[RMDB]
RNA sequence: GGGAACGACUCGAGUAGAGUCGAAAAGAAAGGAAUCUGAAGCCAGGAACGUUGUGGCCCAUCCAAGGGGGAAGUGCCCAGAGAGAAGGGAAGAGGUAGAACUGGAGACAGCUGGUGCUUCUUAGGGAGAUGCUCAGCCUGCCCAAGAGGCUAAUUAAAAAUAGUGGAGGUUCGCCUCCACUAUUUUAAAAGAAACAACAACAACAAC
Reactivity to DMS in 0.01 (KOAc 150mM, MgCl2 10mM, bicine 150mM(pH8.5), 24C), signal-to-noise 1, nucleotides 027 to 156: g000a100a080a110g090g000a050a100u010c030u020g010a090a100g020c060c010a080g000g030a070a120c050g030u010u010g000u010g000g030c010c030c040a160u000c040c100a090a120g000g000g010g070g030a060a050g010u000g030c070c030c040a100g010a110g010a110g060a120a080g020g050g000a060a050g000a090g000g000u000a060g010a050a100c030u000g030g000a070g020a150c060a010g020c040u000g010g020u010g000c020u020u010c040u000u010a120g000g000g000a040g000a060u000g010c020u010c070a090g030c000c010u000g060c030c000c030a060a090g020a060g000g040c040u000a060a040u000u000a030
The record gives the reactivity of an RNA of 207 nucleotides to DMS.
For DMS, 1,968 sequencing reads were counted.
The reactions ran in a buffer of 150 mM KOAc, 10 mM MgCl2 and 150 mM bicine (pH 8.5), at 24 C.
It was measured as part of the RMDB library OK3TST.
In probing experiments dimethyl sulfate is read out at A N1 and C N3, which are open when not base-paired.